[RMDB]
RNA sequence: GGGAACGACUCGAGUAGAGUCGAAAAGAUAUGGAGAGUGGAUCGAUAAGUAUCUAUCGGAAACGAUAGAAUACUUUUGACGAUCGCUCCUAAGUCAAAGCCUAAUUCACUUCGGUGAAUUAGGCAAUCUUGAGCAUCAGUUCGCUGAUGCUCAAGAAAAAGAAACAACAACAACAAC
Reactivity to 2A3 in 0.01 (KOAc 150mM, MgCl2 10mM, bicine 150mM(pH8.5), 24C), signal-to-noise 1, nucleotides 027 to 126: g000a000u030a010u160g070g010a110g020a060g210u300g090g030a030u000c010g040a040u020a140a000g000u020a000u000c010u020a000u000c000g030g060a090a040a060c030g000a020u000a010g030a030a070u020a020c020u000u040u060u060g200a140c000g010a000u010c020g010c000u000c000c000u020a080a030g030u070c050a130a090a030g000c020c000u000a010a000u020u020c000a000c030u030u100c270g110g020u010g000a000a010u010u020a000g010g000c020a000a000
Reactivity to DMS in 0.01 (KOAc 150mM, MgCl2 10mM, bicine 150mM(pH8.5), 24C), signal-to-noise 1, nucleotides 027 to 126: g010a050u000a270u000g000g010a060g000a040g020u020g020g010a020u020c010g020a100u000a010a010g000u010a020u000c010u000a000u000c000g040g000a200a040a200c000g010a030u010a000g000a100a040u000a010c010u000u000u010u000g000a220c100g010a010u010c000g000c000u000c010c000u000a020a210g000u010c040a090a100a230g030c000c010u000a000a000u000u000c000a020c000u000u010c190g050g020u010g000a000a010u000u000a000g000g000c000a000a000